[RMDB]
RNA sequence: GGGAACGACUCGAGUAGAGUCGAAAAGUUCCCUCCAUAAUCUGAGUCAAGGAAAAUUUAAUUGGCAACAAUGAGUAUGCUCUCGCUGCCUAAUCGAAGUAUAGUAGAUUACUGGCUUUAUUCCUUUACAAGGUAGAGGAACGAGACGUCGCUCCGAUCAAUAAUCUUCCUUCGGGAAGAUUAUUGAAAAAGAAACAACAACAACAAC
Reactivity to DMS in 0.01 (KOAc 150mM, MgCl2 10mM, bicine 150mM(pH8.5), 24C), signal-to-noise 2, nucleotides 027 to 156: g000u000u000c000c000c000u020c070c030a110u000a030a030u000c010u000g010a160g000u000c060a080a110g020g010a040a080a120a110u000u010u000a090a120u000u000g010g000c020a030a110c070a100a110u010g010a050g020u000a060u000g020c070u000c000u000c030g020c040u000g000c000c000u010a030a020u000c000g020a150a300g010u010a080u000a110g030u000a120g000a020u000u000a010c040u000g010g010c010u000u010u010a110u010u000c000c000u000u000u000a050c020a140a170g020g040u000a060g010a030g020g020a020a020c020g000a070g020a040c100g000u000c020g000c050u000c010c020g040a240
Reactivity to 2A3 in 0.01 (KOAc 150mM, MgCl2 10mM, bicine 150mM(pH8.5), 24C), signal-to-noise 4, nucleotides 027 to 156: g020u020u000c030c020c000u000c010c010a170u110a170a160u080c050u090g060a030g040u060c030a030a030g060g080a110a120a030a080u120u180u130a120a150u070u050g030g010c030a060a030c030a110a210u150g000a010g020u070a030u120g020c030u020c000u000c010g060c070u040g000c010c000u000a000a010u010c000g000a000a010g040u140a070u160a300g000u000a030g000a020u010u040a070c140u090g000g000c000u030u010u060a020u030u020c000c000u010u000u040a040c090a270a050g200g000u010a000g000a000g000g000a010a000c000g010a000g000a010c010g020u050c090g030c020u000c010c030g070a060

Source: RMDB library ARCHII, as collected in RNAgym. The record gives the reactivity of an RNA of 207 nucleotides to DMS and 2A3. Reactivities are given for positions 27 through 156. 2A3 adducts were read by reverse transcription with SuperScript II with manganese. Conditions: 150 mM KOAc, 10 mM MgCl2 and 150 mM bicine (pH 8.5), 24 C. DMS adducts were read by reverse transcription with MarathonRT.